[RMDB]
RNA sequence: GGGAACGACUCGAGUAGAGUCGAAAAUAACUGUUAUACCGAAGAGAAAUCUUGUCAGGUCUACACGCAAGUGUUGAAUGAAAAUUUAAUCGUAUUUGUAAAUACGACACCUUGUGUGGAAGCUGUCCUUUAUGGACAGCUUUUUUGUCGCACGCCGCCUUAGCUUACGGUUCGCCGUAAGCUAAGGAAAAGAAACAACAACAACAAC
Reactivity to DMS in 0.01 (KOAc 150mM, MgCl2 10mM, bicine 150mM(pH8.5), 24C), signal-to-noise 1, nucleotides 027 to 156: u010a100a120c070u010g010u000u010a180u000a270c020c020g020a070a050g010a110g020a140a110a140u000c030u000u000g020u000c040a130g000g000u010c030u000a120c000a000c010g000c010a020a020g010u010g070u020u010g030a030a060u010g000a100a060a150a110u010u010u000a040a120u000c020g020u000a020u000u000u000g040u010a070a020a020u000a010c010g000a070c020a030c020c000u010u000g000u000g010u000g020g000a040a030g030c010u020g010u010c000c010u000u000u000a160u030g060g020a000c010a000g000c010u000u000u000u000u000u000g020u010c030g020c020a050c060g000c030c050g000
Reactivity to 2A3 in 0.01 (KOAc 150mM, MgCl2 10mM, bicine 150mM(pH8.5), 24C), signal-to-noise 1, nucleotides 027 to 156: u020a010a020c010u020g140u120u100a130u040a060c010c030g050a030a010g010a000g050a050a130a040u000c010u060u040g040u290c090a070g010g000u000c000u010a010c000a000c000g000c000a060a030g010u010g010u300u110g070a030a040u010g020a040a050a050a100u160u170u110a020a040u010c000g000u000a000u000u000u140g120u040a010a010a010u000a000c010g000a020c000a000c000c010u010u000g020u000g000u000g000g000a000a000g000c000u020g020u000c020c040u180u230u300a090u300g000g000a000c000a000g000c000u000u000u000u000u000u050g020u020c040g000c010a000c100g050c060c000g000